[RMDB]
RNA sequence: GGGAACGACUCGAGUAGAGUCGAAAACUAUUUGGUGUUCGUACCAAUAACCACAUCAGGUCUCCAAGGUGAAUAGCCUCUGGUCAAAUGUAUUAAUGUAGAUAAGGGAAGUCGGCAAAACCGAUCUGUAACUUCGGGAUAAGGAUUGGCUCUAAAGCAAUCAAUACCAGUUCGCUGGUAUUGAUUGAAAAGAAACAACAACAACAAC
Reactivity to 2A3 in 0.01 (KOAc 150mM, MgCl2 10mM, bicine 150mM(pH8.5), 24C), signal-to-noise 4, nucleotides 027 to 156: c040u050a100u130u040u030g020g000u040g070u160u190c080g030u110a020c010c000a010a040u090a060a030c030c020a050c020a080u080c050a020g070g040u010c040u000c080c020a050a040g020g010u060g060a090a080u070a090g010c020c000u020c090u040g010g030u020c020a020a070a070u100g030u060a080u110u080a120a080u080g030u050a040g050a130u080a090a030g030g010g020a030a030g040u030c020g030g020c040a020a060a050a110c010c000g000a020u030c050u080g090u060a040a030c020u040u030c070g030g000g000a020u040a110a010g030g020a030u020u040g030g000c010u000c020u110a120a080a020g050
Reactivity to DMS in 0.01 (KOAc 150mM, MgCl2 10mM, bicine 150mM(pH8.5), 24C), signal-to-noise 3, nucleotides 027 to 156: c050u010a070u010u000u000g010g040u000g010u010u000c080g000u010a130c030c010a070a120u010a110a160c030c030a080c050a070u010c050a070g030g020u010c020u010c020c010a070a100g000g030u010g020a110a120u000a190g020c010c010u010c030u000g030g020u010c030a030a060a080u000g010u010a070u000u000a070a080u000g010u010a060g020a060u000a040a070g020g010g010a040a080g010u000c040g030g010c030a060a050a070a260c010c000g010a010u000c020u000g000u000a080a110c020u000u010c120g040g010g010a110u000a060a210g010g010a090u000u000g000g030c030u000c050u000a050a080a150g000
Chemical mapping of a 207-nucleotide RNA with 2A3 and DMS. For DMS, 6,084 sequencing reads were counted. For 2A3 the reverse transcriptase was SuperScript II with manganese. It was measured as part of the RMDB library PDB130. The RNA was probed in 150 mM KOAc, 10 mM MgCl2 and 150 mM bicine (pH 8.5) at 24 C.